[RMDB]
RNA sequence: GGGAACGACUCGAGUAGAGUCGAAAAGAUAUGGAUUAUCCCUAACCGUGAUGACCUCGGAAACGAGCAAGCGGUUAGGGAGUAAUCCUAAGUCAAAUCUAACCCAGGGUUCGCCCUGGGUUAGAAACCCAAAACUAAACUUCGGUUUAGUUUUGGGAAAAGAAACAACAACAACAAC
Reactivity to DMS in 0.01 (KOAc 150mM, MgCl2 10mM, bicine 150mM(pH8.5), 24C), signal-to-noise 2, nucleotides 027 to 126: g000a040u000a300u000g020g010a030u010u000a070u000c000c000c010u000a000a000c010c000g040u000g000a130u000g000a120c300c000u010c010g000g000a110a170a180c000g030a000g010c040a070a210g020c020g010g000u000u000a000g000g000g020a000g000u020a000a010u000c000c020u000a040a070g000u010c030a050a150a120u000c000u010a000a010c000c000c000a010g020g000g030u010u010c260g030c040c000c010u000g020g000g000u000u010a000g000a000a080a180
This 177-nucleotide RNA was probed chemically with DMS. The DMS profile rests on 1,229 reads. The reactions ran in a buffer of 150 mM KOAc, 10 mM MgCl2 and 150 mM bicine (pH 8.5), at 24 C.